[RMDB]
RNA sequence: GGGAACGACUCGAGUAGAGUCGAAAAGGUGUUGUUGGCCUGCGCCCCUCCCUUGGGGCAACAAGUAGGAGUGGAGUAGUGCCUGCCCGGCUCAACAGAGACACUACAGGUCCAAUAGCGCGCACUGCUACGCAGCCAAUUUCGAUUGGCUGCGUAGAAAAGAAACAACAACAACAAC
Reactivity to DMS in 0.01 (KOAc 150mM, MgCl2 10mM, bicine 150mM(pH8.5), 24C), signal-to-noise 1, nucleotides 027 to 126: g000g000u000g000u000u000g040u000u000g010g030c020c000u000g000c150g000c010c000c000c010u000c240c050c050u000u020g000g020g000g020c110a030a040c150a030a060g030u000a070g020g010a050g020u020g020g000a210g010u000a020g000u000g010c000c000u000g000c060c080c030g000g010c010u000c080a080a110c000a070g000a160g000a120c030a000c020u020a040c080a100g010g000u000c030c040a040a030u010a050g000c020g020c040g000c000a080c070u000g000